[RMDB]
RNA sequence: GGGAACGACUCGAGUAGAGUCGAAAAGAUAUGGACGUAGUCAAGAACUACGACUUACAUCGGAAACGAUGUAAAGUCGCUUGAGCUACGUCCUAAGUCAAAACACACUGGGUUCGCCCAGUGUGAAUCUCAUUAUUCAGUUCGCUGAAUAAUGAGAAAAAGAAACAACAACAACAAC
Reactivity to 2A3 in 0.01 (KOAc 150mM, MgCl2 10mM, bicine 150mM(pH8.5), 24C), signal-to-noise 7, nucleotides 027 to 126: g020a010u030a020u090g000g000a000c010g000u010a000g020u040c030a030a020g030a220a260c280u300a120c300g000a000c000u000u010a000c000a000u000c000g010g000a040a030a030c010g000a010u010g010u020a080a080a040g000u000c010g000c220u020u020g020a060g120c000u000a000c010g000u010c000c000u000a000a000g000u000c000a010a010a070a040c010a000c010a010c010u010g000g000g090u090u110c300g170c050c000c000a000g010u000g000u000g000a000a040
Reactivity to DMS in 0.01 (KOAc 150mM, MgCl2 10mM, bicine 150mM(pH8.5), 24C), signal-to-noise 8, nucleotides 027 to 126: g000a050u000a230u010g000g000a030c000g030u000a000g020u000c010a040a030g030a230a130c260u020a300c030g000a020c000u000u000a010c000a010u000c000g010g000a090a050a130c000g010a010u000g000u000a010a010a050g010u000c000g010c030u000u000g000a120g010c000u000a010c010g010u000c000c000u000a000a050g010u010c020a130a110a110a250c010a010c000a000c000u000g000g000g020u000u010c300g020c000c000c010a010g010u000g010u000g010a040a080